[RMDB]
RNA sequence: GGGAACGACUCGAGUAGAGUCGAAAAGAUAUGGACGUGACCAUGGAGACCAUAUUCGGAAACGAAUAUCGGUCUAUGAAGUGGUACGUCCUAAGUCAAAACAAGACAUGGUUCGCCAUGUCUUGAAGUACCCAUAUCCGUUCGCGGAUAUGGGUACAAAAGAAACAACAACAACAAC
Reactivity to 2A3 in 0.01 (KOAc 150mM, MgCl2 10mM, bicine 150mM(pH8.5), 24C), signal-to-noise 3, nucleotides 027 to 126: g010a020u040a010u060g020g000a020c010g000u100g280a110c010c000a000u020g090g070a300g000a100c000c000a000u000a010u000u010c000g000g010a010a010a000c020g000a010a010u050a030u080c240g010g010u000c010u040a300u210g020a020a000g000u000g000g040u020a010c000g000u010c010c000u000a000a000g010u000c010a030a000a070a190c010a000a020g000a000c000a010u010g020g010u080u120c230g000c130c000a000u000g010u010c000u010u010g000a020a000
Reactivity to DMS in 0.01 (KOAc 150mM, MgCl2 10mM, bicine 150mM(pH8.5), 24C), signal-to-noise 2, nucleotides 027 to 126: g000a010u010a130u010g000g000a030c000g020u000g010a070c000c000a000u000g000g000a130g000a000c010c010a010u000a030u000u000c000g020g000a020a010a070c010g000a010a010u000a010u000c180g050g000u010c010u040a140u000g000a160a270g010u000g000g000u000a000c000g010u000c000c000u010a010a050g000u000c010a070a080a100a230c000a010a000g020a010c010a010u000g000g020u000u020c300g000c010c000a000u000g000u000c000u000u010g020a050a100
Annotation
The record gives the reactivity of an RNA of 177 nucleotides to 2A3 and DMS. The DMS profile rests on 1,947 reads. The reactions ran in a buffer of 150 mM KOAc, 10 mM MgCl2 and 150 mM bicine (pH 8.5), at 24 C.